[RMDB]
RNA sequence: GGGAACGACUCGAGUAGAGUCGAAAAAUCGCCGAAUGCGGCGGUAACGUCAGUUCAGAACAUGGGGUGGGCAGCCGCAAGCGUGCCUACCUGGGAAUGUCCCGGCAGGCCAACGACGUCGCCGCGAGUAACAGCACAACUUCGGUUGUGCUGUUACAAAAGAAACAACAACAACAAC
Reactivity to DMS in 0.01 (KOAc 150mM, MgCl2 10mM, bicine 150mM(pH8.5), 24C), signal-to-noise 2, nucleotides 027 to 126: a120u010c010g010c010c020g040a100a090u060g000c010g010g000c020g000g000u090a110a010c020g010u010c010a150g090u000u000c120a040g020a020a020c140a120u050g030g000g040g000u000g030g000g010c010a300g040c010c050g000c300a130a240g000c030g000u010g020c000c000u000a000c000c000u040g000g050g000a040a060u000g000u000c020c040c030g030g060c020a050g000g000c020c090a050a060c050g000a020c000g000u020c010g000c020c000g010c000g050a120
Reactivity to 2A3 in 0.01 (KOAc 150mM, MgCl2 10mM, bicine 150mM(pH8.5), 24C), signal-to-noise 4, nucleotides 027 to 126: a000u100c100g020c040c050g090a140a030u200g040c010g000g000c020g000g020u080a100a030c030g000u000c030a150g010u060u050c080a050g020a190a060c080a130u070g070g000g000g020u030g010g020g000c020a000g010c010c040g110c160a060a030g000c030g210u150g000c010c010u030a000c000c000u000g000g010g000a170a120u160g100u170c030c000c010g050g010c010a040g070g010c010c010a010a010c000g020a020c000g000u010c000g010c000c000g000c000g000a000